[RMDB]
RNA sequence: GGGAACGACUCGAGUAGAGUCGAAAAUAGUCAUAUUGAUUAUAACAACUAGCAUAUAUCUAUUUUGGCAGUUGGGGGAUAUCAAUGAUGUAUUUAACCAGUCUAUUUUAAUCAAUGUUAGAUUACCUCAAAGACUUAAUUUCGAUUAAGUCUUUGAAAAAGAAACAACAACAACAAC
Reactivity to 2A3 in 0.01 (KOAc 150mM, MgCl2 10mM, bicine 150mM(pH8.5), 24C), signal-to-noise 9, nucleotides 027 to 126: u030a010g030u020c010a010u050a070u150u060g010a000u000u080a030u030a100a040c010a010a010c010u050a080g010c040a040u130a030u030a060u200c090u120a240u150u210u090u070g120g000c000a000g000u010u010g000g000g000g010g020a030u040a000u160c010a020a010u040g030a020u060g080u130a060u010u110u030a060a060c020c020a020g070u030c040u060a170u080u110u050u120a050a040u070c070a020a040u130g080u060u030a040g010a100u040u050a080c020c030
Reactivity to DMS in 0.01 (KOAc 150mM, MgCl2 10mM, bicine 150mM(pH8.5), 24C), signal-to-noise 7, nucleotides 027 to 126: u000a040g010u000c010a050u010a050u020u010g000a020u000u000a230u090a040a060c030a020a020c010u000a130g030c020a060u030a040u020a080u050c180u040a120u020u010u020u020g010g010c010a020g000u000u000g000g010g000g000g010a110u020a020u000c020a030a030u000g010a030u000g010u010a030u000u020u010a140a140c050c040a090g010u010c070u010a030u020u010u010u010a030a060u020c090a030a080u020g010u010u010a040g000a070u000u000a070c200c090
Structure probing data (2A3 and DMS) for a 177-nucleotide construct. The RNA was probed in 150 mM KOAc, 10 mM MgCl2 and 150 mM bicine (pH 8.5) at 24 C.